The data come from the RNA Mapping Database (RMDB), library RNAMAK.
This 207-nucleotide RNA was probed chemically with 2A3 and DMS.
For 2A3, 3,793 sequencing reads were counted.
[RMDB]
RNA sequence: GGGAACGACUCGAGUAGAGUCGAAAAGUGCCUAUGUUCGCAUAGGCACAAAAAACCGUAGGCAUGCUCCCAGAGCAACAGCUACGGUUCGAAAGAGCCGUAGACAUGCUCGGGACAUGCCUAAACGGAAAAAGGAACAGAGUUCGCUCUGUUCCAAGCUGUUAUCUAGAUUCGUCUAGAUAACAGCAAAAGAAACAACAACAACAAC
Reactivity to 2A3 in 0.01 (KOAc 150mM, MgCl2 10mM, bicine 150mM(pH8.5), 24C), signal-to-noise 3, nucleotides 027 to 156: g000u000g000c000c010u000a010u030g020u010u120c230g000c160a000u000a010g000g000c000a010c000a000a020a000a000a010a000c020c000g010u010a010g000g010c010a010u010g020c050u060c010c000c030a020g010a000g000c000a000a070c050a170g010c000u000a000c010g000g030u000u000c020g050a060a060a080g000a000g000c000c000g000u000a000g020a020c000a050u030g000c000u000c000g000g000g000a000c000a000u000g030c000c000u000a000a000a000c000g010g060a120a040a020a080a080g000g000a000a000c010a010g010a000g020u110u140c210g070c110u000c000u010g010u000u000c000c000a000a010
Reactivity to DMS in 0.01 (KOAc 150mM, MgCl2 10mM, bicine 150mM(pH8.5), 24C), signal-to-noise 2, nucleotides 027 to 156: g000u000g020c000c000u000a000u000g030u000u000c300g060c020a040u000a000g030g010c030a000c000a000a050a050a130a030a090c000c000g010u000a010g010g030c010a050u010g020c090u010c010c070c010a170g050a050g000c000a060a110c100a170g010c000u000a010c000g000g000u000u000c000g000a200a160a300g030a010g020c000c000g000u020a030g000a040c030a300u000g020c010u000c020g000g010g000a040c000a000u000g020c000c000u010a000a020a010c010g010g010a020a090a070a110a220g010g010a040a050c010a010g010a040g010u010u000c300g020c010u000c000u000g000u000u000c000c000a000a050